RNA sequence: GGGAACGACUCGAGUAGAGUCGAAAAUGAGCUGGACGGGAACGUCUCCUCGCAGGUGACCGUCAACCGAUUGGCCGCAAUGUGUGUGUCGAAGAAGGCGCCGACGGCCUCCUUACCUUUGAUGCCGAUUAAACUCUAGUUUCGACUAGAGUUUAAUAAAAGAAACAACAACAACAAC
Reactivity to 2A3 in 0.01 (KOAc 150mM, MgCl2 10mM, bicine 150mM(pH8.5), 24C), signal-to-noise 7, nucleotides 027 to 126: u140g000a020g040c070u070g030g020a030c010g010g020g050a110a070c020g030u010c010u020c020c020u020c040g020c090a020g000g040u020g020a110c030c020g020u030c040a030a060c020c010g080a110u040u090g000g020c010c010g040c120a160a220u140g100u020g020u030g000u010g020u180c020g040a080a050g060a080a050g110g000c020g010c020c030g090a100c040g010g020c000c000u020c000c000u030u070a140c010c000u060u050u100g060a060u120g050c020c010g000
Reactivity to DMS in 0.01 (KOAc 150mM, MgCl2 10mM, bicine 150mM(pH8.5), 24C), signal-to-noise 9, nucleotides 027 to 126: u010g010a100g030c060u010g010g010a060c020g010g000g020a150a110c060g010u000c020u010c270c040u000c160g020c180a100g010g010u000g010a080c040c040g010u000c050a100a100c050c030g000a140u000u010g010g010c010c030g010c120a120a080u010g010u000g020u000g020u010g020u010c020g000a050a070g010a070a110g010g020c300g000c050c040g000a050c040g000g000c010c020u000c020c010u000u000a090c130c020u000u010u000g000a060u010g010c040c060g000